[RMDB]
RNA sequence: GGGAACGACUCGAGUAGAGUCGAAAAUGCUACAAUGGACGGUACAAAGAGCUGCAAGACCGCGAGGUGGAGCUAAUCUCAUAAAACCGUUCUCAGUUCGGAUUGUAGGCUGCAACUCGCCUACAUGCCAUUAACUUGUCUUCGGACAAGUUAAUGGAAAAGAAACAACAACAACAAC
Reactivity to 2A3 in 0.01 (KOAc 150mM, MgCl2 10mM, bicine 150mM(pH8.5), 24C), signal-to-noise 2, nucleotides 027 to 126: u140g020c020u060a050c070a080a100u110g000g000a000c020g000g000u080a020c060a070a110a010g020a010g000c040u030g000c020a020a010g020a030c000c010g000c050g050a060g000g010u010g000g010a010g000c000u030a060a070u060c000u010c030a030u160a070a040a000a000c000c000g000u000u030c010u010c000a080g010u050u090c050g060g050a130u050u050g000u010a000g020g010c000u050g040c040a090a100c040u050c130g000c000c000u000a010c000a010u020g010
Reactivity to DMS in 0.01 (KOAc 150mM, MgCl2 10mM, bicine 150mM(pH8.5), 24C), signal-to-noise 4, nucleotides 027 to 126: u010g010c080u000a070c110a040a100u010g020g000a030c000g000g030u020a060c150a130a120a070g010a000g020c300u010g020c010a030a300g000a030c000c010g020c260g000a180g000g010u000g000g000a300g000c040u000a040a080u000c010u000c000a020u010a060a050a090a040c030c000g020u000u000c000u010c140a100g000u000u000c100g000g000a070u010u000g030u000a010g000g000c010u000g000c160a050a070c160u000c120g030c000c010u000a020c010a010u000g020